Source information: This 177-nucleotide RNA was probed chemically with DMS and 2A3. 2A3 adducts were read by reverse transcription with SuperScript II with manganese. The reactions ran in a buffer of 150 mM KOAc, 10 mM MgCl2 and 150 mM bicine (pH 8.5), at 24 C.

RNA sequence: GGGAACGACUCGAGUAGAGUCGAAAACACGAAAGUUGGCUAAUCCUGGUCGGACAUCAGGGGGUUAGUGCAAUGGCAUAAGCCAACUUGGCGCUAAUAGAUACUAAUCGUAGCAUAGCUGAAUAAAAAUGCCAUUAGCGUUCGCGCUAAUGGCAUUAAAAGAAACAACAACAACAAC
Reactivity to DMS in 0.01 (KOAc 150mM, MgCl2 10mM, bicine 150mM(pH8.5), 24C), signal-to-noise 2, nucleotides 027 to 126: c070a250c050g000a060a090a000g000u010u010g010g000c040u000a150a130u070c010c000u000g050g020u000c150g040g070a290c090a000u000c000a030g000g000g000g060g000u010u000a040g000u000g050c020a280a090u000g030g000c000a120u000a090a100g000c010c000a010a000c020u000u000g000g000c220g010c000u010a030a140u100a190g020a000u000a100c160u000a110a060u050c110g000u000a040g010c000a160u000a040g010c000u000g000a050a050u020a000a120a080
Reactivity to 2A3 in 0.01 (KOAc 150mM, MgCl2 10mM, bicine 150mM(pH8.5), 24C), signal-to-noise 2, nucleotides 027 to 126: c130a010c040g040a040a050a000g010u000u000g000g000c000u130a000a050u070c010c010u020g000g000u000c130g180g100a030c030a060u050c020a080g000g030g000g070g000u030u130a020g100u070g000c030a050a300u120g060g000c000a000u050a260a000g000c000c030a040a000c000u010u090g040g000c000g000c080u000a000a040u070a240g040a050u070a100c140u100a010a160u100c030g090u070a000g000c000a010u060a030g000c010u040g070a200a060u100a140a040a090